RNA sequence: GGGAACGACUCGAGUAGAGUCGAAAAAUUCGGCGCUGCUGUUGGGCGCCUACGAACUCGACAAGGCGGUUUAUGAGACCGGCUAUGAGACACGGCACCGGCCGGGUUGGCUUCCGAUUCCGCUGCGAAAGCUAGUUCUGUUCGCAGAACUAGCUUUAAAAGAAACAACAACAACAAC
Reactivity to DMS in 0.01 (KOAc 150mM, MgCl2 10mM, bicine 150mM(pH8.5), 24C), signal-to-noise 3, nucleotides 027 to 126: a140u030u010c080g010g000c070g030c010u000g010c100u000g010u000u000g020g000g010c020g040c010c000u010a010c070g030a090a130c050u010c050g000a150c070a080a190g000g000c040g020g000u000u010u020a090u020g030a090g010a070c040c030g010g010c010u000a110u010g000a150g020a120c090a110c080g010g000c040a100c100c050g000g000c020c030g010g010g010u020u000g000g000c050u000u010c030c040g030a100u000u010c020c020g010c040u000g000c140g000
Reactivity to 2A3 in 0.01 (KOAc 150mM, MgCl2 10mM, bicine 150mM(pH8.5), 24C), signal-to-noise 2, nucleotides 027 to 126: a000u160u080c010g000g000c000g000c000u080g000c000u070g090u030u040g020g000g000c000g010c030c020u000a010c000g000a070a030c050u030c050g040a010c080a140a000g010g010c000g000g100u030u040u040a230u210g060a100g010a120c000c020g040g010c010u030a050u300g110a080g030a020c060a010c060g080g000c050a020c070c040g110g000c000c000g020g030g000u040u070g040g020c000u080u000c010c000g020a030u020u040c000c000g030c080u020g010c000g030